[RMDB]
Overview
The record gives the reactivity of an RNA of 177 nucleotides to DMS and 2A3. Conditions: 150 mM KOAc, 10 mM MgCl2 and 150 mM bicine (pH 8.5), 24 C. The DMS profile rests on 4,200 reads. 2A3 adducts were read by reverse transcription with SuperScript II with manganese.
RNA sequence: GGGAACGACUCGAGUAGAGUCGAAAAAAAAAGAUAUGGAACAGAACUACACGGACCGGGAGCGAUGAAACUGGAUCGGAAACGAUCCAGUGGAGCUCCCUAGUACGUGCUGUUCCUAAGUCAAAAAUCUAUUAUUCUAGUUCGCUAGAAUAAUAGAAAAAGAAACAACAACAACAAC
Reactivity to DMS in 0.01 (KOAc 150mM, MgCl2 10mM, bicine 150mM(pH8.5), 24C), signal-to-noise 3, nucleotides 027 to 126: a060a040a060a160a100g010a010u000a170u010g000g000a010a000c000a020g010a130a020c040u030a300c010a000c000g000g000a080c300c300g000g020g000a000g030c000g000a090u010g000a080a140a030c010u000g010g000a010u000c000g000g000a030a010a040c000g010a010u000c000c010a000g000u000g020g000a020g010c000u000c000c000c000u000a000g010u000a070c000g000u010g010c010u000g000u000u000c020c000u000a000a090g000u020c000a050a080a090a090a100
Reactivity to 2A3 in 0.01 (KOAc 150mM, MgCl2 10mM, bicine 150mM(pH8.5), 24C), signal-to-noise 1, nucleotides 027 to 126: a200a000a000a000a020g010a000u020a000u030g000g000a010a010c000a010g020a040a000c120u300a050c300a000c020g000g000a010c010c020g000g040g000a000g000c030g300a300u010g000a010a010a000c020u010g000g000a000u010c000g020g010a000a030a000c010g000a000u000c020c010a000g000u000g000g000a000g000c000u010c010c000c000u000a000g010u000a000c000g000u010g050c000u010g010u020u000c010c000u010a010a000g020u020c000a000a040a080a090a250